[RMDB]
RNA sequence: GGGAACGACUCGAGUAGAGUCGAAAAUUAAUAACCUGCUCAUAGCCUUAUCGCCUCAGCUUCCGCUCGUAAGACGAGGGCAACGAUAAGUCACCCAAAACGAGAUCGUGGGGACGCCGCCGUUUGAGGAUCGAAACACUAAAUUGAAUCAAACUAGCUACUUUUUAGGGUUCGCCCUAAAAAGUAGAAAAGAAACAACAACAACAAC
Reactivity to 2A3 in 0.01 (KOAc 150mM, MgCl2 10mM, bicine 150mM(pH8.5), 24C), signal-to-noise 2, nucleotides 027 to 156: u110u020a010a190u100a060a060c010c000u030g000c030u020c030a120u120a030g000c000c040u010u020a020u030c040g000c030c000u040c040a060g030c030u050u020c100c030g120c090u090c080g030u070a020a010g040a120c060g000a060g000g000g020c040a030a020c010g000a020u040a070a000g040u010c070a130c030c020c030a040a140a000a020c030g000a020g020a070u060c040g080u060g000g020g040g010a030c020g000c040c000g030c010c040g050u020u050u020g060a020g010g000a010u120c030g050a050a010a010c060a010c090u100a110a180a170u170u110g090a000a020u050c030a130a000a050c020u000a030g060
Source: RMDB library ARCHII, as collected in RNAgym. This 207-nucleotide RNA was probed chemically with 2A3. For 2A3, 821 sequencing reads were counted. The RNA was probed in 150 mM KOAc, 10 mM MgCl2 and 150 mM bicine (pH 8.5) at 24 C.